An RNA of 177 nucleotides, treated with 2A3 and DMS and read out base by base.
[RMDB]
RNA sequence: GGGAACGACUCGAGUAGAGUCGAAAAGUUUUAACUUGUUGCCGUUCGGGACGUUGACGAAAUGGAGCGAUUUGACCCGUCUUGAAACACGGACCAAGGAGUCUAACAUGUGUGCAAGUGUUAGGGUACUCUAGUAGUCCUUCGGGACUACUAGAGUAAAAGAAACAACAACAACAAC
Reactivity to 2A3 in 0.01 (KOAc 150mM, MgCl2 10mM, bicine 150mM(pH8.5), 24C), signal-to-noise 3, nucleotides 027 to 126: g000u000u030u060u090a120a050c020u030u000g020u040u170g030c020c000g010u010u030c030g000g020g030a020c040g040u000u080g070a070c040g070a040a160a100u170g080g050a050g160c110g080a110u060u050u150g140a140c010c030c000g000u000c000u040u060g000a050a060a000c050a000c060g000g000a000c050c000a030a040g010g020a060g030u000c000u000a000a000c000a040u070g140u030g040u080g230c130a110a040g020u010g030u040u030a030g000g000g010u010
Reactivity to DMS in 0.01 (KOAc 150mM, MgCl2 10mM, bicine 150mM(pH8.5), 24C), signal-to-noise 2, nucleotides 027 to 126: g020u020u010u000u000a090a160c030u000u000g010u000u000g010c000c020g010u010u010c020g020g010g010a040c050g010u010u000g040a190c110g000a010a050a080u030g020g010a060g000c070g000a200u010u010u000g010a120c050c120c000g000u010c020u000u010g020a060a180a050c180a300c050g010g000a060c170c020a020a040g000g000a220g010u020c000u000a030a020c070a020u000g010u010g030u050g010c160a050a160g010u000g000u010u000a030g010g000g000u010
Reactivities are given for positions 27 through 126.